[RMDB]
RNA sequence: GGGAACGACUCGAGUAGAGUCGAAAACACUAGCACAUAUGUCAAAUUCCUAAUUAACGUUUUAUUCUUUAUAUCCAUCGUUUCUUAGAGCCGUAAUUGUGCUGAUAUCAAUACCAGGGAAGGACACCUUUAAUCGAUCAUUCGUGAUCGAUUAAAGAAAAGAAACAACAACAACAAC
Reactivity to 2A3 in 0.01 (KOAc 150mM, MgCl2 10mM, bicine 150mM(pH8.5), 24C), signal-to-noise 9, nucleotides 027 to 126: c050a010c040u070a030g020c020a010c010a040u110a030u100g080u100c080a040a050a150u150u070c010c000u040a050a060u060u060a060a030c010g050u030u030u040u100a100u090u050c070u040u200u080a150u060a030u130c050c040a040u040c020g020u010u020u000c010u020u030a030g010a030g070c020c020g070u060a100a110u060u040g010u020g000c010u010g030a040u030a020u160c070a080a010u040a110c010c020a020g040g020g040a040a020g060g020a010c000a070c030
Reactivity to DMS in 0.01 (KOAc 150mM, MgCl2 10mM, bicine 150mM(pH8.5), 24C), signal-to-noise 9, nucleotides 027 to 126: c110a080c110u010a030g020c020a020c020a040u010a060u010g000u020c080a080a090a150u010u010c060c000u010a020a040u010u010a040a040c040g010u010u010u010u000a050u010u030c080u010u010u020a070u020a090u030c090c070a070u020c050g000u000u000u000c010u000u000a020g010a090g010c090c040g020u000a060a080u010u000g010u000g000c020u000g010a100u010a070u010c130a060a080u010a080c050c040a050g010g000g010a060a050g000g010a060c130a070c180
The record gives the reactivity of an RNA of 177 nucleotides to 2A3 and DMS. The reactions ran in a buffer of 150 mM KOAc, 10 mM MgCl2 and 150 mM bicine (pH 8.5), at 24 C.